[RMDB]
Overview
An RNA of 177 nucleotides, treated with DMS and read out base by base.
RNA sequence: GGGAACGACUCGAGUAGAGUCGAAAAAGUCCUAUGCUACGGCAUAGGACAAAUCAUCAUAGAACCGUCUAAAGAGUACACUUCUAUGCAUAGAAGCGUACUCUUUAGACGGUUUUAUGAUGGCCAACCUUCUCGACUAAUUCGUUAGUCGAGAAGGAAAAGAAACAACAACAACAAC
Reactivity to DMS in 0.01 (KOAc 150mM, MgCl2 10mM, bicine 150mM(pH8.5), 24C), signal-to-noise 2, nucleotides 027 to 126: a080g000u000c010c000u010a010u010g020c020u010a100c230g030g010c000a000u010a000g020g010a000c000a000a030a070u020c000a010u000c000a010u000a000g000a010a000c000c010g010u000c000u010a010a000a010g000a010g030u010a000c000a020c010u000u000c000u000a050u030g020c250a120u000a010g000a010a000g020c020g020u010a000c000u000c000u000u000u000a000g000a000c000g010g000u000u000u000u000a000u000g000a000u000g000g010c060c040a120a140
The reactions ran in a buffer of 150 mM KOAc, 10 mM MgCl2 and 150 mM bicine (pH 8.5), at 24 C. It was measured as part of the RMDB libraries RFM100 and RFMREP. For DMS the reverse transcriptase was MarathonRT.